Notes
Chemical mapping of a 177-nucleotide RNA with DMS and 2A3. For DMS, 864 sequencing reads were counted. Source: RMDB library OK2TRN, as collected in RNAgym.
RNA sequence: GGGAACGACUCGAGUAGAGUCGAAAAGGGUAUUUCUAAAAUGCCUGUUGCAGAGGAAGCCAUAGGCAGGUACCACAUUACUGUUUCCUUGCACAAAAAGUAUACACAGGACUCUAGCUAGGGCAGGGGUAUCACAGGUUUUCGAACCUGUGAUACCAAAAGAAACAACAACAACAAC
Reactivity to DMS in 0.01 (KOAc 150mM, MgCl2 10mM, bicine 150mM(pH8.5), 24C), signal-to-noise 1, nucleotides 027 to 126: g010g000g000u000a030u000u000u000c130u030a060a060a100a100u000g000c000c000u000g010u000u000g030c010a030g010a160g010g010a110a110g000c040c100a110u000a070g000g010c040a050g020g000u000a050c040c070a110c140a110u010u020a110c060u000g000u000u000u000c030c010u010u000g000c040a070c130a040a030a040a050a040g020u000a020u000a100c140a090c090a070g000g010a090c030u000c010u000a050g000c010u010a070g010g010g000c050a070g010g030
Reactivity to 2A3 in 0.01 (KOAc 150mM, MgCl2 10mM, bicine 150mM(pH8.5), 24C), signal-to-noise 1, nucleotides 027 to 126: g080g000g000u040a100u000u190u020c210u160a230a160a020a040u010g010c040c000u040g050u020u030g020c030a000g090a060g300g060a140a010g000c030c030a070u040a010g050g000c010a000g010g010u030a050c000c060a060c040a130u080u170a080c000u040g050u000u110u040c000c040u000u100g000c040a050c020a080a100a030a030a000g060u080a060u070a100c140a000c040a070g220g000a070c000u000c030u030a080g060c020u000a010g010g000g000c010a010g100g000

Annotation
For 2A3 the reverse transcriptase was SuperScript II with manganese.